About this RNA:
Source: RMDB library OK2TST, as collected in RNAgym. Chemical mapping of a 177-nucleotide RNA with 2A3 and DMS. Reactivities are rounded to 0.1 and cut off at 0 and 3. Conditions: 150 mM KOAc, 10 mM MgCl2 and 150 mM bicine (pH 8.5), 24 C. DMS adducts were read by reverse transcription with MarathonRT. 2A3 adducts were read by reverse transcription with SuperScript II with manganese.
[RMDB]
RNA sequence: GGGAACGACUCGAGUAGAGUCGAAAAUGAUCGGUCAUGCAGAACCGCUCGCCCCACUCCGGUUCGCGGCAGGUGCCCUGCUCGUAGUGGCACUUCUCCGGGCUGACGAUGCAACUGUCGCACUGCAGCAUGCAUGGUACUUCGGUACCAUGCAUGCAAAAGAAACAACAACAACAAC
Reactivity to 2A3 in 0.01 (KOAc 150mM, MgCl2 10mM, bicine 150mM(pH8.5), 24C), signal-to-noise 3, nucleotides 027 to 126: u160g000a000u020c000g010g010u030c060a100u170g060c070a040g050a090a030c010c000g010c000u010c000g060c010c000c010c000a040c060u110c060c070g150g080u180u160c110g010c010g000g000c010a010g000g020u010g000c010c000c000u010g010c010u000c050g020u030a020g000u060g130g100c110a110c000u080u030c040u000c000c020g030g000g000c010u020g040a080c090g070a070u190g020c000a020a020c020u030g010u050c000g040c000a020c040u030g000c010a030
Reactivity to DMS in 0.01 (KOAc 150mM, MgCl2 10mM, bicine 150mM(pH8.5), 24C), signal-to-noise 2, nucleotides 027 to 126: u020g000a040u000c000g000g010u000c020a160u020g030c050a060g030a190a010c000c020g030c120u000c000g020c080c010c020c060a090c160u000c120c070g000g010u000u000c080g010c090g000g000c130a010g030g010u010g020c010c070c010u000g010c030u020c030g020u000a040g010u000g030g000c100a110c060u000u000c030u010c070c020g000g000g020c010u000g010a070c180g000a150u010g000c050a080a050c060u000g010u000c030g020c020a080c000u000g000c090a020